Chemical mapping of a 207-nucleotide RNA with 2A3. Values cover nucleotides 27 to 156. The RNA was probed in 150 mM KOAc, 10 mM MgCl2 and 150 mM bicine (pH 8.5) at 24 C. For 2A3 the reverse transcriptase was SuperScript II with manganese.

RNA sequence: GGGAACGACUCGAGUAGAGUCGAAAAAUCAAGUGAAUCGCCGUAACGGAGCGUGUUCGUCCGCGACGUCACGGUUAAAUCAAAUGACAGAACUAAACAUGUAGAACUGGUCGUGGACCGCUUCUGGACGCGGGUUCGAUUCCCGCCGCCUCCACCACCAGUUAGUGUCGUUCGCGACACUAACUGGAAAAGAAACAACAACAACAAC
Reactivity to 2A3 in 0.01 (KOAc 150mM, MgCl2 10mM, bicine 150mM(pH8.5), 24C), signal-to-noise 1, nucleotides 027 to 156: a000u090c040a070a010g150u010g080a050a000u050c030g010c010c000g020u070a010a000c000g030g000a000g000c060g020u040g060u110u130c080g030u000c010c020g000c000g000a000c000g000u010c030a000c060g000g060u040u040a000a000a000u080c020a000a000a120u150g030a050c060a130g030a060a000c010u090a030a250a000c050a080u180g040u060a030g080a130a020c040u040g000g060u020c030g080u070g020g010a000c050c000g050c080u050u000c030u150g000g100a010c060g000c010g000g000g040u090u110c050g010a000u080u050c010c000c000g030c000c080g000c000c000u000c000c000a010c010c030a050